Structure probing data (DMS and 2A3) for a 207-nucleotide construct. The reactions ran in a buffer of 150 mM KOAc, 10 mM MgCl2 and 150 mM bicine (pH 8.5), at 24 C. The DMS profile rests on 4,073 reads.

RNA sequence: GGGAACGACUCGAGUAGAGUCGAAAAUGCAGAAUGAGUCGGCUGGUAAUGAGUCUUGUCGUGUGAAGUGUAUACAUAAUAAUGUUUUGGGUGACUGUUGUCUGAAUUUGUUGUGGCAGGGUCACACUGGCCACUUACAUGAACAUUUCGCGCGAGAUCUAGCAACUUCAUUCGUGAAGUUGCUAGAAAAAGAAACAACAACAACAAC
Reactivity to DMS in 0.01 (KOAc 150mM, MgCl2 10mM, bicine 150mM(pH8.5), 24C), signal-to-noise 2, nucleotides 027 to 156: u000g020c040a060g020a070a070u010g020a080g060u000c050g020g020c020u000g010g040u000a120a160u000g000a170g040u010c050u010u000g000u020c040g030u000g060u020g000a040a030g030u010g010u000a090u000a190c090a050u000a020a130u000a050a070u020g020u010u000u000u000g030g010g040u010g010a040c030u000g020u020u010g010u010c020u010g020a080a130u010u020u010g030u000u010g030u000g030g000c040a060g020g030g020u000c050a010c070a010c020u000g000g020c040c030a070c060u000u010a040c050a070u000g020a080a070c020a050u010u000u000c060g000c030g000c000g010a040g000a180
Reactivity to 2A3 in 0.01 (KOAc 150mM, MgCl2 10mM, bicine 150mM(pH8.5), 24C), signal-to-noise 5, nucleotides 027 to 156: u110g000c020a010g060a140a040u070g040a060g080u090c030g000g000c010u030g070g000u050a090a070u130g060a020g040u010c040u080u120g070u030c040g000u020g000u010g000a020a030g000u010g020u030a080u080a160c040a010u120a070a050u090a090a020u300g060u020u170u240u050g020g010g000u000g000a010c020u030g160u300u020g000u040c020u040g140a220a230u060u130u130g100u070u090g020u040g010g000c000a000g030g030g000u030c000a010c000a000c030u010g020g020c010c010a070c070u010u040a030c020a060u040g020a010a000c000a010u000u030u020c010g000c020g000c020g030a000g020a040